This 170-nucleotide RNA was probed chemically with 2A3 and DMS.
2A3 adducts were read by reverse transcription with SuperScript II with manganese.
The 2A3 profile rests on 4,230 reads.
Reactivities are given for positions 27 through 129.
[RMDB]
RNA sequence: GGGAACGACUCGAGUAGAGUCGAAAACUUCGGCAAAGGGCGGCGGUCCUCAGUGCUCUUACUCUUUUCUGUAAAGAGGAGACUGCUGGACUCUCCGCCCAAGCCGAGAUGGGCCUCAGUUCCGAGCGAAGCACGCACUUCGGUGCGUGCAAAAGAAACAACAACAACAAC
Reactivity to 2A3 in 0.01 (KOAc 150mM, MgCl2 10mM, bicine 150mM(pH8.5), 24C), signal-to-noise 4, nucleotides 027 to 129: c000u020u010c020g000g000c030a100a110a300g020g000g070c010g000g000c010g010g000u000c000c000u020c020a050g000u110g180c000u020c030u040u200a240c000u020c010u040u050u100u080c150u280g250u300a020a000a000g000a020g010g010a010g060a000c000u030g070c000u030g030g000a000c000u020c020u020c140c000g000c020c000c000a020a020g000c020c030g000a000g000a000u090g070g010g000c030c000u080c050a090g030u110u010c000c000g000a050g000c050g040a020a000
Reactivity to DMS in 0.01 (KOAc 150mM, MgCl2 10mM, bicine 150mM(pH8.5), 24C), signal-to-noise 2, nucleotides 027 to 129: c000u010u040c040g000g010c000a000a130a130g000g000g000c000g020g000c300g040g000u010c020c000u010c010a040g000u020g000c000u000c020u010u110a300c000u020c010u030u010u020u080c290u030g000u070a000a000a000g040a000g000g000a000g000a000c020u030g010c100u000g000g030a010c000u020c000u040c070c040g000c040c000c000a010a060g020c000c000g010a010g020a000u020g020g050g020c010c000u030c140a090g030u050u020c030c010g020a030g080c040g020a050a040